[RMDB]
RNA sequence: GGGAACGACUCGAGUAGAGUCGAAAACAUGACGAGUUCGCUCGUCAUGAAAGAAAGAAAGAUAGUCUGAAGCGCCAGUCUAGCGCAAAAGAAAGAAAGAAAAAAGCAAACUCUUCGGAGUUUGCAAGAUAAGAAAUAUGUUCGCAUAUUUCUUAUCAAAAGAAACAACAACAACAAC
Reactivity to 2A3 in 0.01 (KOAc 150mM, MgCl2 10mM, bicine 150mM(pH8.5), 24C), signal-to-noise 3, nucleotides 027 to 126: c000a000u000g010a000c000g000a000g020u070u070c130g090c110u000c010g010u000c010a000u000g010a000a000a000g080a020a060a000g100a030a130a010g100a060u100a050g110u050c010u030g010a130a010g020c000g000c030c040a040g090u100c100u160a040g000c000g000c010a060a040a010a040g020a020a040a010g100a030a090a010g090a030a150a000a020a010a000g000c000a010a000a000c000u000c000u060u120c230g070g000a000g000u000u010u010g000c000a000a010
Reactivity to DMS in 0.01 (KOAc 150mM, MgCl2 10mM, bicine 150mM(pH8.5), 24C), signal-to-noise 4, nucleotides 027 to 126: c010a010u000g000a010c000g010a000g000u010u020c260g020c000u000c010g000u010c000a000u000g010a060a100a090g000a090a080a110g020a100a130a130g020a170u010a100g000u010c000u000g000a200a250g000c000g020c010c110a140g020u010c190u030a060g000c000g020c010a020a060a140a040g000a040a040a080g000a090a080a120g000a020a040a050a070a120a090g010c000a000a000a020c000u000c000u000u000c160g020g000a020g000u000u000u000g020c000a030a020